[RMDB]
RNA sequence: GGGAACGACUCGAGUAGAGUCGAAAAGUAAAGGCAUUGGCAUCUUUUGCUCCGGAAAAACCGGUGUGUUAAGUAGUACUGUCUUUGACGUUAUGCAACUCAACGGUAUCGAACAUGUACCAGAUACCUCUAACGCUGUAUUCGUACAGCGUUAGAGAAAAGAAACAACAACAACAAC
Reactivity to 2A3 in 0.01 (KOAc 150mM, MgCl2 10mM, bicine 150mM(pH8.5), 24C), signal-to-noise 3, nucleotides 027 to 126: g000u030a010a010a050g000g030c010a020u070u120g090g040c010a060u090c020u010u050u030u080g010c010u000c030c000g000g040a110a120a020a060a080c010c000g020g000u010g000u010g010u000u020a050a030g010u080a030g010u040a090c030u010g000u000c000u050u010u040g060a020c000g010u070u070a110u190g060c020a060a070c020u050c050a040a110c090g020g010u020a020u090c030g050a080a050c070a150u210g010u110a030c020c000a020g000a070u070a050c000
Reactivity to DMS in 0.01 (KOAc 150mM, MgCl2 10mM, bicine 150mM(pH8.5), 24C), signal-to-noise 4, nucleotides 027 to 126: g000u010a030a030a040g020g010c030a040u000u020g010g020c040a210u000c020u010u000u000u000g010c000u000c010c020g000g030a070a130a050a230a100c020c010g000g000u000g000u010g000u000u010a030a050g010u000a140g020u000a110c080u000g020u000c020u000u000u000g010a050c070g010u010u000a040u000g010c140a040a090c080u000c080a090a100c140g010g010u000a020u010c040g020a070a080c120a080u010g020u000a080c070c030a110g010a060u010a030c130